RNA sequence: GGGAACGACUCGAGUAGAGUCGAAAAGAGAGAGGACCAGGCCAGGAAUGAAGAGGAAGGACAGAAGCGUGGGUUGCGGAGGGUGUGUGGAGUGGAGGGCCGGAGCAGGCCCUUGGGCCUUGCGUCCGUACCAUAUUUGUUUCGACAAAUAUGGUACAAAAGAAACAACAACAACAAC
Reactivity to DMS in 0.01 (KOAc 150mM, MgCl2 10mM, bicine 150mM(pH8.5), 24C), signal-to-noise 9, nucleotides 027 to 126: g010a120g010a120g010a120g010g010a060c060c050a070g010g010c020c030a110g000g010a100a100u010g010a090a070g010a120g000g010a090a100g010g010a100c150a090g010a080a070g010c120g000u010g010g010g000u010u010g000c200g000g000a120g000g000g000u000g010u010g020u010g000g000a090g020u010g000g010a040g010g010g010c070c030g010g010a140g020c130a070g010g010c010c000c020u000u000g010g010g010c010c010u010u010g010c090g010u000c030c020
Reactivity to 2A3 in 0.01 (KOAc 150mM, MgCl2 10mM, bicine 150mM(pH8.5), 24C), signal-to-noise 6, nucleotides 027 to 126: g100a000g010a010g000a040g010g010a020c010c030a020g020g010c010c010a030g060g070a120a130u170g040a080a060g030a020g070g020a060a040g040g020a020c040a080g120a120a010g050c050g040u070g000g040g030u110u110g020c060g020g130a090g050g000g010u100g020u040g010u070g050g060a120g010u070g000g060a030g010g000g000c030c010g010g010a040g080c060a040g000g000c000c010c070u020u050g000g000g000c010c010u030u120g030c040g050u010c010c010